Source information: An RNA of 177 nucleotides, treated with 2A3 and DMS and read out base by base. The 2A3 profile rests on 6,701 reads. In probing experiments dimethyl sulfate is read out at A N1 and C N3, which are open when not base-paired. DMS adducts were read by reverse transcription with MarathonRT.

[RMDB]
RNA sequence: GGGAACGACUCGAGUAGAGUCGAAAAGAUAUGGAGCCACUGACUGGAGCUAGGGUCGGAAACGACCCAUAGCGUUGAAAGUCAGGGCUCCUAAGUCAAAACUGGAACAUGUUCGCAUGUUCCAGAACUAGAUUUUCAAGUUCGCUUGAAAAUCUAGAAAAGAAACAACAACAACAAC
Reactivity to 2A3 in 0.01 (KOAc 150mM, MgCl2 10mM, bicine 150mM(pH8.5), 24C), signal-to-noise 4, nucleotides 027 to 126: g030a020u040a000u100g000g000a000g000c010c010a300c260u000g010a000c010u090g140g300a080g030c000u010a010g000g010g000u020c000g020g030a050a050a030c020g020a010c010c040c000a040u010a000g000c000g020u130u150g170a300a080a000g000u000c000a000g010g000g020c000u000c000c000u000a000a000g000u000c000a000a000a160a180c000u010g000g000a000a000c000a010u010g030u100u100c240g010c250a000u010g000u000u000c020c000a010g000a000a010
Reactivity to DMS in 0.01 (KOAc 150mM, MgCl2 10mM, bicine 150mM(pH8.5), 24C), signal-to-noise 3, nucleotides 027 to 126: g000a050u000a300u010g000g010a010g030c000c020a130c020u000g000a010c000u000g000g020a220g010c000u000a020g000g010g020u000c000g000g000a060a050a150c000g020a020c000c000c000a020u000a010g020c000g030u020u020g010a130a150a030g010u000c000a020g000g000g000c000u000c000c000u000a000a070g010u000c040a090a060a160a190c000u000g010g000a030a010c010a000u000g010u010u020c270g020c010a010u000g000u000u000c000c000a000g000a040a150